Annotation:
Conditions: 150 mM KOAc, 10 mM MgCl2 and 150 mM bicine (pH 8.5), 24 C. Structure probing data (DMS and 2A3) for a 207-nucleotide construct. For 2A3, 3,285 sequencing reads were counted. Source: RMDB library OK3TST, as collected in RNAgym. Reactivities are given for positions 27 through 156.

RNA sequence: GGGAACGACUCGAGUAGAGUCGAAAAAGCUCAGCAUGGAUAGAUGCGUCUCUGCGGAUACGUGCAUCAACUCCGCAUCGAACGAGCACCGGCGAGCGUACUCAGUGCCGUCAACGCGCAAGAACUCCUCCGGAGAGGAGAAAUACCCUGGUGCGUCUAGGACAAUUCAAUUCGUUGAAUUGUCCUAAAAAGAAACAACAACAACAAC
Reactivity to DMS in 0.01 (KOAc 150mM, MgCl2 10mM, bicine 150mM(pH8.5), 24C), signal-to-noise 3, nucleotides 027 to 156: a100g010c010u000c000a100g040c050a070u010g010g030a130u000a070g010a090u000g010c070g030u000c030u030c070u000g020c050g040g020a050u000a050c100g010u000g030c090a110u000c030a060a150c030u000c010c000g000c010a080u000c050g010a100a090c060g020a150g010c000a070c050c010g000g020c100g010a150g050c060g000u000a080c030u000c040a140g010u000g030c010c000g000u000c040a060a050c040g030c010g060c030a090a070g010a100a240c020u000c000c000u000c010c060g040g000a230g000a060g000g010a030g020a000a050a090u010a080c080c040c050u000g020g020u000g000c000g010u000c060
Reactivity to 2A3 in 0.01 (KOAc 150mM, MgCl2 10mM, bicine 150mM(pH8.5), 24C), signal-to-noise 4, nucleotides 027 to 156: a000g010c010u010c050a020g000c030a090u220g040g020a050u060a060g060a060u090g050c030g030u020c020u000c010u070g070c080g040g000a010u030a120c090g020u110g140c030a050u070c030a040a070c030u000c000c010g000c030a080u170c060g050a060a070c060g000a010g010c020a030c010c020g000g010c020g020a070g000c030g010u060a040c040u040c070a060g020u050g090c010c000g040u040c050a040a030c020g010c000g000c030a020a010g020a060a030c000u000c000c000u060c020c040g170g040a220g000a020g090g000a020g040a020a050a000u120a030c030c030c000u030g030g000u020g000c030g020u030c050